[RMDB]
RNA sequence: GGGAACGACUCGAGUAGAGUCGAAAAGCUUUCUUGGCGGGCGUCCAGCCCUGGUGGUGCUGGAUAACUGCGAGCACCUGCUGGAUGCGACGGCGGCCUUGGUGUUAGCGCUGGUGAAAGCGUGCCGGAAAGAGCCGUACUUCGGUACGGCUCUUUCAAAAGAAACAACAACAACAAC
Reactivity to 2A3 in 0.01 (KOAc 150mM, MgCl2 10mM, bicine 150mM(pH8.5), 24C), signal-to-noise 1, nucleotides 027 to 126: g040c000u000u160u060c050u130u220g070g000c040g030g010g000c000g000u000c000c000a040g170c020c020c020u000g030g050u100g000g050u080g000c000u000g100g080a150u120a080a060c150u080g010c060g010a030g000c000a020c000c010u030g060c030u030g020g020a080u010g040c030g010a020c010g030g180c060g050g030c080c000u000u000g050g000u030g020u030u210a060g050c060g000c070u080g050g120u140g100a030a000a000g040c010g030u030g000c000c000g060
Conditions: 150 mM KOAc, 10 mM MgCl2 and 150 mM bicine (pH 8.5), 24 C. Structure probing data (2A3) for a 177-nucleotide construct. It was measured as part of the RMDB library OK1LIB. Reactivities are given for positions 27 through 126. 2A3 adducts were read by reverse transcription with SuperScript II with manganese.